[RMDB]
The record gives the reactivity of an RNA of 177 nucleotides to 2A3 and DMS. Conditions: 150 mM KOAc, 10 mM MgCl2 and 150 mM bicine (pH 8.5), 24 C. The 2A3 profile rests on 934 reads. Reactivities are rounded to 0.1 and cut off at 0 and 3. The data come from the RNA Mapping Database (RMDB), library RFM100. The DMS profile rests on 1,529 reads.
RNA sequence: GGGAACGACUCGAGUAGAGUCGAAAACGUGAGACUUCCCUUUUUUUCAUCUUAACGUUUACUAUCCUUCAUUGUUUGAAUGUGCAAGAUAUUUUGUAAAAUAGUACAGGAUGGCUAUGAAGAAUAAUUCGAGAUCUUUUUUCGAAAAGAUCUCGAAAAAAGAAACAACAACAACAAC
Reactivity to 2A3 in 0.01 (KOAc 150mM, MgCl2 10mM, bicine 150mM(pH8.5), 24C), signal-to-noise 1, nucleotides 027 to 126: c010g030u060g040a010g020a050c040u090u150c010c000c050u060u000u000u040u000u000u110c060a080u010c000u050u050a120a000c040g030u000u020u040a080c040u040a020u090c020c000u020u020c000a000u010u000g020u000u030u000g050a050a010u000g000u000g050c000a000a070g100a070u010a030u070u120u060u040g130u030a010a060a000a090u050a010g000u000a010c000a000g000g040a020u020g010g000c000u000a000u020g000a000a000g000a000a000u060a020a030
Reactivity to DMS in 0.01 (KOAc 150mM, MgCl2 10mM, bicine 150mM(pH8.5), 24C), signal-to-noise 1, nucleotides 027 to 126: c030g030u000g000a020g000a150c180u000u000c020c000c010u030u010u040u040u010u000u000c060a100u020c070u020u020a150a060c040g030u010u000u000a140c150u000a050u000c030c010u000u000c020a000u000u000g000u000u010u000g000a300a100u000g010u030g000c000a030a150g000a100u030a000u010u010u010u050g000u010a000a090a190a030u020a080g000u000a000c030a000g020g000a110u000g000g010c040u000a020u000g040a050a000g030a000a030u000a040a120